The record gives the reactivity of an RNA of 207 nucleotides to DMS and 2A3. The RNA was probed in 150 mM KOAc, 10 mM MgCl2 and 150 mM bicine (pH 8.5) at 24 C. High 2A3 reactivity points to a flexible backbone, as in loops and unpaired stretches.
[RMDB]
RNA sequence: GGGAACGACUCGAGUAGAGUCGAAAAGAUCGCUGCGUGUGGCCCUAAGCAAUGAAGAUGACACUUGAGGGAGGUCUCACUCUGCAGAGGCAUCUUCACCGUCAGAUGGCGCGCUGGAUCACGAUCGCUGGGGGCUUGGGGUAGAGCGGCGAGAUGGGAAUACAAUCGAGUUCGCUCGAUUGUAUUCAAAAGAAACAACAACAACAAC
Reactivity to DMS in 0.01 (KOAc 150mM, MgCl2 10mM, bicine 150mM(pH8.5), 24C), signal-to-noise 2, nucleotides 027 to 156: g010a070u010c000g010c010u000g030c000g020u000g000u050g000g010c000c000c010u010a050a060g040c040a140a080u010g000a000a000g000a040u000g020a050c000a160c050u010u000g020a150g050g000g020a070g000g010u000c140u000c070a120c020u000c010u010g030c040a230g000a080g030g000c010a020u000c020u010u000c010a100c060c020g030u000c040a130g020a110u000g010g000c000g010c050g050c030u000g000g020a150u010c030a050c030g010a030u010c040g030c030u000g000g020g010g030g020c010u000u000g000g030g010g000u000a040g000a050g000c030g010g020c000g000a010g000a080u010g020g000
Reactivity to 2A3 in 0.01 (KOAc 150mM, MgCl2 10mM, bicine 150mM(pH8.5), 24C), signal-to-noise 5, nucleotides 027 to 156: g050a030u000c000g000c010u000g010c020g040u140g120u200g200g020c010c000c000u010a000a010g000c030a040a160u180g000a000a000g010a000u020g040a070c070a090c260u050u040g020a200g030g030g020a020g030g030u090c050u040c100a120c020u010c030u050g040c030a030g010a010g040g000c000a010u000c000u000u000c010a010c020c010g120u110c010a050g050a260u160g050g010c030g010c000g010c080u080g050g030a110u160c070a010c080g060a090u100c040g000c050u050g000g000g010g060g010c000u000u010g020g000g000g010u030a020g030a000g100c000g000g000c030g000a010g010a040u110g100g060